[RMDB]
RNA sequence: GGGAACGACUCGAGUAGAGUCGAAAAGUUAAUUUGUCUGUGCAAUGGAUAGAGCGUUAUUCUUAUUUUCUUCCUGCCGCUUCAUCGAAAAAUGAUGAUUUUCCUACUGCUGCGGCAUCAUACUGAAUAAAAAUGGUACUUUCGAGUACCAUUUUUAAAAAGAAACAACAACAACAAC
Reactivity to 2A3 in 0.01 (KOAc 150mM, MgCl2 10mM, bicine 150mM(pH8.5), 24C), signal-to-noise 2, nucleotides 027 to 126: g020u030u060a080a090u090u050u160g070u000c030u030g170u040g030c010a060a110u090g030g020a060u080a110g080a030g070c060g020u050u050a050u120u000c030u100u070a150u080u130u040u000c030u060u000c000c000u000g020c000c010g000c010u020u010c010a020u030c020g060a140a040a050a060a070u190g040a010u010g050a030u050u030u020u030c000c010u040a140c040u070g060c010u050g000c000g040g000c020a000u030c000a010u020a110c010u090g100a150a080
Reactivity to DMS in 0.01 (KOAc 150mM, MgCl2 10mM, bicine 150mM(pH8.5), 24C), signal-to-noise 8, nucleotides 027 to 126: g010u010u000a050a070u000u000u000g020u010c030u000g030u000g010c100a090a090u010g010g000a070u000a070g010a090g020c120g010u000u000a060u010u000c040u000u000a120u010u000u000u000c070u000u010c040c020u000g020c040c010g010c020u000u000c000a030u000c170g010a020a030a050a070a090u010g010a090u010g000a230u000u000u000u000c010c020u000a090c220u000g000c080u000g020c020g010g010c010a040u000c110a060u010a090c130u000g010a100a170
The data come from the RNA Mapping Database (RMDB), library OK2TST. This 177-nucleotide RNA was probed chemically with 2A3 and DMS. Reactivities are given for positions 27 through 126. The reactions ran in a buffer of 150 mM KOAc, 10 mM MgCl2 and 150 mM bicine (pH 8.5), at 24 C. For 2A3 the reverse transcriptase was SuperScript II with manganese.